[RMDB]
RNA sequence: GGGAACGACUCGAGUAGAGUCGAAAACAUGGUGGCAAGUACGCCGCGAUAUUGCGCCACCUGCAAUAGAAGCGUAGACAUCAACUGUAGCGAGAGCUACUCAACUUAUGGACCUUAGAGCAAGCGAAGACGACUGGUCCUGUCGGAAUUCGCUAGACAGCUACUGGAUAUUCGUAUCCAGUAGCUGAAAAGAAACAACAACAACAAC
Reactivity to DMS in 0.01 (KOAc 150mM, MgCl2 10mM, bicine 150mM(pH8.5), 24C), signal-to-noise 2, nucleotides 027 to 156: c030a090u000g020g040u010g000g000c030a050a110g010u000a020c060g030c030c140g050c120g020a200u000a050u010u020g010c040g010c000c050a060c020c070u000g000c010a090a080u000a070g010a130a080g000c040g040u010a090g010a130c050a190u020c050a090a110c040u010g010u000a010g000c020g000a210g000a300g010c020u020a020c000u000c050a060a170c050u010u010a090u000g020g000a050c000c020u000u000a090g020a170g010c050a070a120g020c020g010a240a120g020a140c040g020a110c080u000g000g000u000c020c010u010g000u000c010g040g010a110a280u000u000c020g010c050u000a100g020a300